[RMDB]
RNA sequence: GGGAACGACUCGAGUAGAGUCGAAAAUUCGGCAUUGUGUCCUUCAAUAAUGAUUGUUUCAUAUGAUGGCACACCUAAGAAUGUCAUAAUUGUUCUUAAAUAACGGUCACCCAUUUCAAAAUCAGCACCACAGGGUCAAGUUCGCUUGACCCUGUGGAAAAGAAACAACAACAACAAC
Reactivity to 2A3 in 0.01 (KOAc 150mM, MgCl2 10mM, bicine 150mM(pH8.5), 24C), signal-to-noise 2, nucleotides 027 to 126: u000u000c000g020g010c020a010u080u000g000u000g080u100c030c000u010u050c030a090a120u290a140a130u080g080a020u000u240g070u300u080u000c030a000u000a000u000g030a000u000g000g000c000a000c000a000c000c000u120a200a070g060a080a040u070g080u000c030a010u110a300a040u070u080g010u040u040c000u030u000a170a070a100u150a210a050c030g040g000u000c070a010c020c030c030a070u040u040u000c220a100a100a060a070u060c000a000g070c030a000